Source: RMDB library OK3TST, as collected in RNAgym. Chemical mapping of a 207-nucleotide RNA with 2A3. For 2A3 the reverse transcriptase was SuperScript II with manganese.
RNA sequence: GGGAACGACUCGAGUAGAGUCGAAAAAGAAACCCUUAAAGGGGCGGACAUGGUCUUCGUUACUGCCGGUGAGGGCGGCGGUACUGGUACAGGUGCAGCACCAGUCGUUGCGGGAAUCGCUAAACGCUUGGGCGCACUUACCGUCGGCGUGGUUACAACCCAGGAGUCGAUUCGUCGACUCCUGGGUAAAAGAAACAACAACAACAAC
Reactivity to 2A3 in 0.01 (KOAc 150mM, MgCl2 10mM, bicine 150mM(pH8.5), 24C), signal-to-noise 2, nucleotides 027 to 156: a010g100a060a100a080c000c010c010u020u130a140a100a070g060g000g020g020c040g010g020a060c040a090u050g100g000u060c060u180u130c100g120u030u090a040c040u040g060c010c010g130g040u070g010a030g010g020g000c020g010g000c000g000g000u040a120c080u120g050g030u120a070c070a140g140g030u000g000c150a190g020c120a300c120c000a010g020u080c020g000u000u040g000c000g000g060g190a120a170u290c020g000c050u120a130a020a020c010g020c040u070u090g000g010g000c020g000c050a010c000u020u010a040c000c000g030u030c020g060g040c020g050u060g010g010u080u160a060c030a090